This 177-nucleotide RNA was probed chemically with 2A3 and DMS. DMS (dimethyl sulfate) methylates the pairing face of unpaired adenines and cytosines. For DMS the reverse transcriptase was MarathonRT. For 2A3 the reverse transcriptase was SuperScript II with manganese. Source: RMDB library OK1LIB, as collected in RNAgym. The reactions ran in a buffer of 150 mM KOAc, 10 mM MgCl2 and 150 mM bicine (pH 8.5), at 24 C. Reactivities are given for positions 27 through 126.
[RMDB]
RNA sequence: GGGAACGACUCGAGUAGAGUCGAAAAGACUGGCGUAGCGCGCGUACCUAUACCAUAGCGCGCGAAGGUAUAGGAUAGGAUAUGGGAAUGGCAUGCCUAAACCAUAUCCAGGCAUGCCAAGCCAGGAGGGUAGCCUGGUGUUCGCAUUAGGCUACCCAAAAGAAACAACAACAACAAC
Reactivity to 2A3 in 0.01 (KOAc 150mM, MgCl2 10mM, bicine 150mM(pH8.5), 24C), signal-to-noise 9, nucleotides 027 to 126: g090a030c010u010g000g000c030g090u130a020g010c010g000c010g000c020g060u090a110c000c010u050a040u040a080c020c040a090u110a090g040c060g000c020g010c010g050a010a010g000g000u020a010u040a020g040g030a060u090a100g020g000a010u010a020u040g040g000g040a060a120u090g010g020c100a110u200g090c010c010u080a130a070a020c010c010a020u020a010u040c020c000a000g040g010c010a000u050g000c000c000a010a000g000c000c000a000g010g020a060
Reactivity to DMS in 0.01 (KOAc 150mM, MgCl2 10mM, bicine 150mM(pH8.5), 24C), signal-to-noise 9, nucleotides 027 to 126: g000a150c020u000g000g010c010g020u020a220g000c020g010c050g010c020g020u030a090c040c020u010a040u010a060c050c070a100u010a180g010c030g020c110g010c010g000a060a080g000g010u000a010u010a040g000g010a170u030a100g010g000a040u010a020u010g000g010g000a080a130u010g000g000c020a080u020g020c010c000u000a080a260a150c050c040a030u010a030u010c030c030a040g000g000c020a020u000g000c000c000a140a120g000c010c000a010g000g010a140